[RMDB]
RNA sequence: GGGAACGACUCGAGUAGAGUCGAAAAGUUUCUUGAUCUUCUUCUUGGCCUUCCGGAGAUCCUUCUCGAGAUCAUCCACUAACUUUCUUGCAUUGACCCACUGCUCGAGGACUCCUUCUCUUCCCGCUCGGGAUUUCUUCGUCUCGGACCGGCUCAUUCAUCAAUAAUGGUUCGCCAUUAUUGAUGAAAAAGAAACAACAACAACAAC
Reactivity to 2A3 in 0.01 (KOAc 150mM, MgCl2 10mM, bicine 150mM(pH8.5), 24C), signal-to-noise 3, nucleotides 027 to 156: g000u030u050u020c010u060u070g040a080u030c020u110u000c000u090u020c030u090u140g040g000c030c010u110u050c100c090g060g010a050g010a060u060c000c050u150u160c070u060c070g130a100g010a110u070c040a070u020c050c000a070c090u090a110a050c020u060u080u080c050u070u110g000c030a100u010u170g040a050c000c000c040a060c060u020g000c000u000c010g010a020g020g000a060c020u020c000c000u040u030c010u010c000u070u040c000c010c010g010c020u040c020g010g010g020a020u050u090u040c040u080u110c040g020u010c010u010c000g000g060a050c030c010g040g000c050u040c070a050u040